[RMDB]
RNA sequence: GGGAACGACUCGAGUAGAGUCGAAAAACCAGCGAGAGUAAGUAGGACGAGGAACAGAAUCCGAAGGGGCACCGAGACACGGCUAUGAGAAAGGAGAACCGAGACGUGCAGAGAGUGCCCGAAAUGAGACCAGAACUUGGGAGCCGAAAGAUGAGGCCAUAUAAGAUGGGUUCGCCCAUCUUAUAUGAAAAGAAACAACAACAACAAC
Reactivity to DMS in 0.01 (KOAc 150mM, MgCl2 10mM, bicine 150mM(pH8.5), 24C), signal-to-noise 2, nucleotides 027 to 156: a050c020c000a120g040c080g000a110g000a150g020u020a040a100g030u030a060g000g010a090c080g010a140g020g000a090a110c040a130g000a070a210u020c030c010g030a140a160g040g020g040g010c030a020c030c020g000a300g020a030c000a020c020g020g010c020u000a110u000g000a160g010a090a130a090g040g010a120g010a070a160c050c020g000a060g010a030c020g010u000g000c010a060g000a100g020a100g030u000g000c000c010c010g010a010a030a040u010g000a170g000a040c040c010a060g020a070a060c080u030u020g000g020g010a100g000c000c010g010a060a070a130g010a090u000g020a130g010g000c130
Reactivity to 2A3 in 0.01 (KOAc 150mM, MgCl2 10mM, bicine 150mM(pH8.5), 24C), signal-to-noise 4, nucleotides 027 to 156: a000c010c000a010g020c040g030a100g000a010g060u110a150a040g010u030a060g070g030a020c030g000a010g000g000a040a040c060a080g090a120a070u060c060c060g020a100a040g000g010g010g000c020a000c000c030g040a040g050a120c000a000c030g010g000c050u060a130u190g100a120g090a140a090a040g130g030a130g030a060a030c030c010g000a000g010a020c020g010u020g000c040a010g060a010g000a020g150u020g000c000c000c000g000a000a010a010u110g000a030g020a010c030c050a010g020a120a040c040u050u050g000g030g000a000g000c000c030g060a080a070a010g050a020u100g020a010g010g020c000
This 207-nucleotide RNA was probed chemically with DMS and 2A3. DMS (dimethyl sulfate) methylates the pairing face of unpaired adenines and cytosines. 2A3 adducts were read by reverse transcription with SuperScript II with manganese. The 2A3 profile rests on 3,101 reads. For DMS, 4,197 sequencing reads were counted. For DMS the reverse transcriptase was MarathonRT.